[RMDB]
RNA sequence: GGGAACGACUCGAGUAGAGUCGAAAAGAUCUAAAGCCAUCGAACAUUGCGGUAAACGAGGACUGUGAGCUUCGCAUCCUGGAUUUCGGUUUGGCCCGUCCCGCAGAAAGCGAGAUGACCGGAUACGCCCUUAGGUCUGUUUCGACAGACCUAAGGGAAAAGAAACAACAACAACAAC
Reactivity to DMS in 0.01 (KOAc 150mM, MgCl2 10mM, bicine 150mM(pH8.5), 24C), signal-to-noise 2, nucleotides 027 to 126: g020a090u010c070u000a110a050a140g000c040c030a050u010c020g000a090a030c130a080u000u010g030c120g020g000u000a050a110a090c070g010a070g000g030a030c070u010g010u000g020a110g000c100u000u000c040g000c060a300u010c030c020u000g030g020a090u010u000u000c040g010g000u010u010u020g010g000c030c060c040g020u000c020c010c000g000c080a090g010a070a100a090g000c020g030a090g040a040u000g010a040c010c030g000g030a080u000a050c180g010
Chemical mapping of a 177-nucleotide RNA with DMS. The data come from the RNA Mapping Database (RMDB), library OK2TRN. The reactions ran in a buffer of 150 mM KOAc, 10 mM MgCl2 and 150 mM bicine (pH 8.5), at 24 C. Values cover nucleotides 27 to 126. The DMS profile rests on 1,439 reads.